[RMDB]
RNA sequence: GGGAACGACUCGAGUAGAGUCGAAAAACAGCAUGUGCAAAGGCUGAGCACCAACACAUAGUGGUCACCUGGGCCUUAUGCCCAGGGAGCCUCCAAAGCAUUCAGCUCCUGCUUGGCCAGUGUGGAGCAUGCAUUGGUAGUUCGCUACCAAUGCAUGAAAAGAAACAACAACAACAAC
Reactivity to 2A3 in 0.01 (KOAc 150mM, MgCl2 10mM, bicine 150mM(pH8.5), 24C), signal-to-noise 6, nucleotides 027 to 126: a000c040a020g060c040a050u110g010u070g060c040a070a060a070g040g000c010u040g040a010g030c030a030c020c040a200a000c040a010c020a070u150a090g100u060g040g010u090c030a020c060c000u000g000g000g030c010c000u270u240a190u300g000c000c000c000a000g010g000g000a000g010c000c000u010c020c030a100a100a010g030c020a040u110u190c060a030g000c000u010c000c010u040g010c000u050u050g060g000c010c020a020g020u060g080u080g110g000a010g040
Reactivity to DMS in 0.01 (KOAc 150mM, MgCl2 10mM, bicine 150mM(pH8.5), 24C), signal-to-noise 6, nucleotides 027 to 126: a110c100a120g010c070a050u000g000u000g020c120a080a140a100g010g000c010u000g020a100g020c070a130c060c040a060a060c080a050c100a070u010a100g020u000g010g010u000c110a220c010c000u000g010g000g020c010c230u010u010a090u010g010c000c000c010a010g010g010g010a100g010c020c010u010c040c070a080a060a150g000c070a090u010u000c130a120g000c020u000c020c020u000g000c020u000u000g010g010c080c050a100g000u000g010u000g000g000a050g010